Structure probing data (2A3 and DMS) for a 177-nucleotide construct.
It was measured as part of the RMDB library OK2TST.
For DMS, 11,055 sequencing reads were counted.
The reactions ran in a buffer of 150 mM KOAc, 10 mM MgCl2 and 150 mM bicine (pH 8.5), at 24 C.
For DMS the reverse transcriptase was MarathonRT.
RNA sequence: GGGAACGACUCGAGUAGAGUCGAAAAUGUGUUACUGGUUUGGAUGCUUCUGAAUGCUGUGAAGUCAGUUUCAUGUACAUGGCUCAUCAGUUUAGCUCUCUCUUGGCUUUGUUUAGACAGUUGGAGCAGGAUGUACGAAAUUCGUUUCGUACAUCCUAAAAGAAACAACAACAACAAC
Reactivity to 2A3 in 0.01 (KOAc 150mM, MgCl2 10mM, bicine 150mM(pH8.5), 24C), signal-to-noise 3, nucleotides 027 to 126: u090g040u010g010u030u050a050c030u040g080g060u060u070u050g070g030a050u080g050c030u030u040c040u120g110a120a090u150g010c000u000g020u040g100a070a020g050u040c010a010g000u030u040u070c040a040u080g010u030a040c010a080u050g010g000c010u010c010a080u040c010a010g010u020u040u110a020g000c000u000c000u020c000u000c000u050u040g030g000c020u100u040u060g090u060u190u010a070g010a050c040a040g020u060u040g030g010a020g020c000
Reactivity to DMS in 0.01 (KOAc 150mM, MgCl2 10mM, bicine 150mM(pH8.5), 24C), signal-to-noise 5, nucleotides 027 to 126: u010g020u010g010u000u010a060c050u000g020g010u000u000u000g010g000a090u000g000c050u000u000c090u000g000a080a080u000g010c030u000g020u000g010a100a070g010u000c030a030g010u000u010u000c080a070u010g010u000a050c100a080u000g000g010c010u000c070a070u000c050a060g000u010u000u010a090g010c030u000c020u000c040u000c040u000u000g010g000c040u000u010u010g000u000u000u000a070g010a050c070a050g010u000u000g000g000a070g030c110